[RMDB]
Overview
Conditions: 150 mM KOAc, 10 mM MgCl2 and 150 mM bicine (pH 8.5), 24 C. Structure probing data (2A3 and DMS) for a 177-nucleotide construct. For 2A3 the reverse transcriptase was SuperScript II with manganese. Values cover nucleotides 27 to 126.
RNA sequence: GGGAACGACUCGAGUAGAGUCGAAAAAUUGCGUUAAUUGUACUGAUGACCGUUGUGUGUUACAUUGUGCUAAUUUCAAUGUAUUGUUUGCUAUGACCAUGCCUAAGACUUGUUUCGGACCCAUAGUCUCUCUAUGUAGGUUCGCCUACAUAGAGAGAAAAGAAACAACAACAACAAC
Reactivity to 2A3 in 0.01 (KOAc 150mM, MgCl2 10mM, bicine 150mM(pH8.5), 24C), signal-to-noise 3, nucleotides 027 to 126: a000u050u080g000c010g000u030u060a050a030u100u080g030u030a030c020u060g080a090u050g040a020c030c030g060u100u090g080u030g020u010g020u060u030a020c010a020u000u070g030u000g040c010u050a060a110u080u090u020c060a040a000u020g060u020a050u070u060g060u050u080u020g030c020u030a030u110g020a010c010c010a030u040g030c000c000u040a060a010g050a030c010u030u020g010u020u010u000c000g020g030a030c000c000c030a030u020a070g050u000
Reactivity to DMS in 0.01 (KOAc 150mM, MgCl2 10mM, bicine 150mM(pH8.5), 24C), signal-to-noise 2, nucleotides 027 to 126: a070u000u010g020c100g030u000u000a090a080u000u000g030u020a080c090u010g010a060u020g010a060c030c040g000u030u000g030u000g030u000g030u000u010a040c030a050u000u000g010u010g010c140u000a080a110u010u000u000c040a000a070u000g020u010a060u010u000g020u000u000u000g000c040u000a040u010g010a020c040c020a070u000g000c040c050u010a090a120g000a070c060u000u000g000u000u000u010c030g010g000a180c040c020c010a130u030a080g010u010